This 207-nucleotide RNA was probed chemically with DMS and 2A3. 2A3 adducts were read by reverse transcription with SuperScript II with manganese. The RNA was probed in 150 mM KOAc, 10 mM MgCl2 and 150 mM bicine (pH 8.5) at 24 C. For 2A3, 1,592 sequencing reads were counted.
RNA sequence: GGGAACGACUCGAGUAGAGUCGAAAAGUAUGGAUGCCACCGUGACGGCUCAAUCACACAAGUGCCAACGAUAACGAGGCGCUCGCUAUUGGUGCGUAACUGACGGCCUGACGGUCUGACGUUACAAAAAACGAAAAGUGGUUCGCCACUUUUCGAACAUGUUUAAACGCUUCGGCGUUUAAACAUGAAAAGAAACAACAACAACAAC
Reactivity to DMS in 0.01 (KOAc 150mM, MgCl2 10mM, bicine 150mM(pH8.5), 24C), signal-to-noise 1, nucleotides 027 to 156: g040u000a000u000g000g050a080u000g000c000c010a040c070c090g020u000g040a180c000g000g110c010u000c060a070a030u000c050a050c010a110c090a080a100g020u100g020c000c010a090a160c070g000a050u020a170a090c090g000a200g030g040c060g080c070u010c050g030c050u000a070u000u010g000g020u000g000c070g010u010a030a010c000u020g020a300c300g030g000c000c000u020g040a070c210g030g070u000c010u000g030a300c230g000u060u000a060c020a020a040a030a050a080a110c010g000a010a000a030a010g010u020g020g000u000u010c300g020c000c010a010c000u000u000u000u000c000g000a070a190
Reactivity to 2A3 in 0.01 (KOAc 150mM, MgCl2 10mM, bicine 150mM(pH8.5), 24C), signal-to-noise 3, nucleotides 027 to 156: g080u060a070u220g050g080a050u090g040c020c030a030c040c030g060u070g050a050c050g020g010c020u030c080a050a090u060c010a020c030a030c030a160a070g060u000g060c010c000a090a050c070g060a110u110a190a030c060g020a070g080g010c040g050c060u040c030g010c020u060a050u110u140g070g000u070g030c080g010u010a010a020c000u020g020a010c010g000g000c020c010u120g100a060c100g000g000u000c010u010g020a020c000g000u020u020a000c000a010a090a010a010a020a030c000g000a000a000a000a000g010u000g030g000u020u060c140g050c030c000a010c000u000u000u000u000c010g000a020a010